This 207-nucleotide RNA was probed chemically with DMS and 2A3. The 2A3 profile rests on 2,693 reads. The DMS profile rests on 3,593 reads. Conditions: 150 mM KOAc, 10 mM MgCl2 and 150 mM bicine (pH 8.5), 24 C.
[RMDB]
RNA sequence: GGGAACGACUCGAGUAGAGUCGAAAAGUGGGUUAGUUCGCUAACCCACCAUAAUCCUAAGUCGAUCCGGGAGACCGAUAAGUAUCGGAAACGAUACUUUUGACGGUCUUUGAUCGUGAUCGAUAUGGACGGUCUUAGUCAGAUUCGUCUGACUAAAAACCAUCCAUUGUUUCGACAAUGGAUGGUUAAAAGAAACAACAACAACAAC
Reactivity to DMS in 0.01 (KOAc 150mM, MgCl2 10mM, bicine 150mM(pH8.5), 24C), signal-to-noise 2, nucleotides 027 to 156: g000u000g000g020g020u000u000a000g020u010u060c300g050c000u010a010a010c000c010c000a000c020c010a070u000a110a070u000c010c000u000a090a300g020u000c020g020a010u000c010c020g070g010g000a010g010a030c010c000g010a190u000a040a040g030u000a010u000c000g010g010a180a140a290c010g010a020u000a020c010u000u000u000u000g060a210c120g020g000u000c000u020u000u020g000a040u010c010g000u010g020a020u000c000g000a040u000a200u000g000g030a110c060g000g010u010c100u000u000a040g000u000c020a020g020a090u000u000c300g050u000c000u000g010a020c000u000a010a020a120
Reactivity to 2A3 in 0.01 (KOAc 150mM, MgCl2 10mM, bicine 150mM(pH8.5), 24C), signal-to-noise 2, nucleotides 027 to 156: g010u010g000g000g000u000u000a000g010u040u120c190g020c140u000a000a000c010c000c000a000c000c000a000u090a040a090u020c000c000u040a140a030g030u000c000g000a010u030c000c020g010g010g000a010g000a000c010c010g010a030u020a070a000g000u000a000u000c000g010g020a090a070a030c000g010a000u000a000c000u020u020u010u050g140a090c010g000g000u010c000u000u000u020g100a070u030c030g120u140g010a000u000c000g010a010u020a050u060g030g010a010c070g080g030u040c050u070u010a000g020u040c000a000g000a030u060u090c170g050u020c090u000g000a020c000u010a000a000a000